[RMDB]
RNA sequence: GGGAACGACUCGAGUAGAGUCGAAAAUCCUAAGUCAGCUCGAGGAUCUAUAGCCUUGAUGUGUAGGAUAGGUUGCAUUUGGAGCAACAGCUCGUCGGAAACGACGAGACAUGCUCCAAAUGCAACCCUUUAAUGUUAUAGGGAGAGCUGAUAUGGAGUCUUUACCUUGGUUCGCCAAGGUAAAGACAAAAGAAACAACAACAACAAC
Reactivity to 2A3 in 0.01 (KOAc 150mM, MgCl2 10mM, bicine 150mM(pH8.5), 24C), signal-to-noise 1, nucleotides 027 to 156: u000c000c000u000a050a020g010u000c000a000g000c000u010c010g060a210g050g000a010u000c000u010a010u010a000g000c000c000u030u030g020a040u040g200u090g190u190a060g120g170a110u110a090g010g010u010u000g000c000a000u000u010u000g040g000a000g000c010a010a040c020a030g050c000u000c000g000u000c000g030g030a080a070a140c020g000a000c040g000a000g010a010c010a000u010g000c000u010c000c000a000a000a000u000g010c000a010a000c000c000c000u000u020u020a000a000u010g000u020u000a000u000a000g020g000g010a030g000a000g000c020u000g000a000u000a040u020g070g060a050